Annotation: Chemical mapping of a 177-nucleotide RNA with DMS and 2A3. High 2A3 reactivity points to a flexible backbone, as in loops and unpaired stretches. The DMS profile rests on 11,866 reads.
RNA sequence: GGGAACGACUCGAGUAGAGUCGAAAAGAAAUAAAGUCGUAAGACGUAAAGCGGGUAAAGGUCGUAAGUAUAUCGUAAAUAAGACCGUAAGAUAUACGUAACCGCGUAAACAGGUAACUGGUAAGAAGGGAAAUAGUUAGUUCGCUAACUAUUUCCCAAAAGAAACAACAACAACAAC
Reactivity to DMS in 0.01 (KOAc 150mM, MgCl2 10mM, bicine 150mM(pH8.5), 24C), signal-to-noise 5, nucleotides 027 to 126: g010a080a090a090u030a040a080a090g030u000c010g010u050a120a090g010a010c020g000u010a080a140a110g010c000g000g000g020u030a070a100a110g000g020u010c060g020u020a040a080g020u000a010u000a000u000c020g010u030a030a070a110u020a060a060g030a100c060c090g010u020a050a060g000a000u000a010u000a010c000g010u030a060a070c000c010g020c020g010u040a050a070a100c050a020g000g010u030a080a150c040u000g000g020u020a070a100g010a160a130
Reactivity to 2A3 in 0.01 (KOAc 150mM, MgCl2 10mM, bicine 150mM(pH8.5), 24C), signal-to-noise 3, nucleotides 027 to 126: g070a000a100a020u300a070a070a000g020u000c000g070u050a160a000g020a030c050g000u080a000a000a170g000c060g000g000g080u060a060a070a010g170g060u070c050g030u050a000a090g050u060a020u000a000u000c070g060u050a000a080a140u160a220a000g020a040c020c000g000u020a050a010g000a000u020a000u000a040c030g010u070a080a050c020c000g000c000g010u030a040a070a000c040a040g080g000u030a060a000c010u030g010g020u090a030a070g100a090a140